[RMDB]
RNA sequence: GGGAACGACUCGAGUAGAGUCGAAAAAGCUCGACCGAGCGGAUCAGGCGGCCUUGCGGCGAAUAGGCGUGGAUGGCGCUGCCGCCCCAGCAGGCAUUCCACAGUGUGCCUUCCGCAUCCACGACCAGCUGAUCACCUGAUUCGUCAGGUGAUCAGCAAAAGAAACAACAACAACAAC
Reactivity to 2A3 in 0.01 (KOAc 150mM, MgCl2 10mM, bicine 150mM(pH8.5), 24C), signal-to-noise 1, nucleotides 027 to 126: a000g020c000u000c020g070a050c050c000g030a010g030c000g020g000a080u120c060a040g060g000c010g010g000c050c010u070u150g070c050g010g000c050g060a110a100u200a170g000g000c020g030u000g000g030a000u000g110g000c070g030c060u020g030c000c000g040c000c000c000c000a000g050c010a000g050g000c010a020u080u050c120c040a150c050a080g090u110g020u100g130c000c000u030u010c000c000g000c010a010u040c010c040a050c000g140a280c040c020a030
Reactivity to DMS in 0.01 (KOAc 150mM, MgCl2 10mM, bicine 150mM(pH8.5), 24C), signal-to-noise 2, nucleotides 027 to 126: a120g050c060u010c010g010a140c020c060g000a110g030c040g010g010a090u020c090a110g020g010c030g030g020c060c110u000u000g010c060g060g010c180g010a110a140u010a060g010g010c010g010u000g010g000a070u000g030g010c060g040c040u000g000c030c030g020c030c010c040c010a140g000c070a020g000g000c000a070u000u010c050c100a060c160a140g020u000g000u010g020c010c010u000u000c040c050g000c020a050u000c020c030a030c010g000a140c000c040a140